[RMDB]
RNA sequence: GGGAACGACUCGAGUAGAGUCGAAAAGAUAUGGAAUGGUGAGCUUGGAUUUAUCACAGUACUCGGAAACGAGUAUCACAGUUGUCAGCUCUAACAUUCCUAAGUCAAAGUGCUGUUCGCAGCACAACUAAUGCGGCUAGUUCGCUAGCCGCAUUAGAAAAGAAACAACAACAACAAC
Reactivity to DMS in 0.01 (KOAc 150mM, MgCl2 10mM, bicine 150mM(pH8.5), 24C), signal-to-noise 2, nucleotides 027 to 126: g000a050u010a290u000g000g000a020a000u010g000g010u010g020a000g020c000u000u010g060g010a110u000u000u000a030u000c070a130c250a270g030u000a000c000u000c000g020g010a110a050a180c000g020a000g000u000a000u000c140a170c220a130g010u010u000g000u010c030a030g000c000u000c000u010a060a150c010a010u000u000c000c000u000a040a110g000u000c020a050a070a130g000u000g000c010u000g000u000u010c180g050c000a000g030c000a000c030a020a150
Reactivity to 2A3 in 0.01 (KOAc 150mM, MgCl2 10mM, bicine 150mM(pH8.5), 24C), signal-to-noise 2, nucleotides 027 to 126: g000a000u040a000u100g010g040a000a030u000g010g000u040g030a010g030c050u200u210g150g180a240u260u300u190a190u200c040a000c030a060g070u000a010c000u000c000g010g070a030a010a000c020g000a000g020u020a010u100c040a020c020a040g080u140u130g130u200c030a000g000c000u000c000u050a260a020c000a010u000u020c010c010u010a060a000g000u000c050a000a240a060g000u000g000c000u020g070u120u170c300g010c120a000g000c010a000c000a010a040